[RMDB]
RNA sequence: GGGAACGACUCGAGUAGAGUCGAAAAGCUUUCUUUCAUGCAAUCCUGAUUAACGGUUAUAGGAGGAGCCAUAAUGGAAUCUGGCCUCCUACUACUCUUCAUGGCAAUGCCCCCAAAAGCCUCAUUGCCGAAUGUCGGGAUUCGUCCCGACAUUCGGAAAAGAAACAACAACAACAAC
Reactivity to 2A3 in 0.01 (KOAc 150mM, MgCl2 10mM, bicine 150mM(pH8.5), 24C), signal-to-noise 3, nucleotides 027 to 126: g010c030u080u040u080c060u100u090u020c090a110u270g030c060a050a120u140c000c010u060g040a100u060u180a140a000c120g060g000u030u010a020u040a090g040g000a010g040g090a130g140c010c000a120u120a300a130u250g120g130a190a170u120c150u000g030g000c010c000u000c000c000u020a000c000u000a000c000u010c000u040u020c040a000u110g020g000c000a000a140u030g060c000c030c000c000c050a000a080a000a080g100c000c000u000c000a030u010u150g000

Chemical mapping of a 177-nucleotide RNA with 2A3.
Values cover nucleotides 27 to 126.